[RMDB]
RNA sequence: GGGAACGACUCGAGUAGAGUCGAAAAGAAAAGGACACGAACAGACACCGAAAGGAAAGCAGGUAGGGCAUGCAGACGCUUGUAGAAAGUUCGUUCAAAACUUGAAAUAGUUUUGAAGUUGUAACCCGCACACCAAGUUAUUCGUAACUUGGUGUGCAAAAGAAACAACAACAACAAC
Reactivity to DMS in 0.01 (KOAc 150mM, MgCl2 10mM, bicine 150mM(pH8.5), 24C), signal-to-noise 1, nucleotides 027 to 126: g010a090a050a040a090g000g100a130c100a090c000g000a080a080c060a130g020a070c040a200c000c000g000a060a060a120g010g040a020a090a070g000c000a010g000g050u000a030g000g000g000c020a080u000g020c060a050g000a050c010g040c020u000u000g000u000a200g030a060a080a000g000u030u000c060g040u000u000c000a000a000a000a000c000u000u000g000a050a060a080u010a000g010u000u000u000u000g000a000a040g000u000u020g000u000a070a070c040c060c040
Reactivity to 2A3 in 0.01 (KOAc 150mM, MgCl2 10mM, bicine 150mM(pH8.5), 24C), signal-to-noise 2, nucleotides 027 to 126: g090a010a090a000a010g100g000a050c040a020c080g080a160a040c010a020g040a040c050a000c010c000g000a110a000a000g080g030a100a060a020g000c040a040g020g020u100a090g170g040g020c030a020u160g010c000a080g080a040c020g030c030u080u030g000u090a010g070a060a050a010g000u030u000c050g000u050u050c020a000a000a000a000c000u030u020g040a060a070a070u150a080g000u050u000u010u000g020a050a020g010u030u040g000u000a040a040c000c000c020
An RNA of 177 nucleotides, treated with DMS and 2A3 and read out base by base.
For DMS the reverse transcriptase was MarathonRT.
The reactions ran in a buffer of 150 mM KOAc, 10 mM MgCl2 and 150 mM bicine (pH 8.5), at 24 C.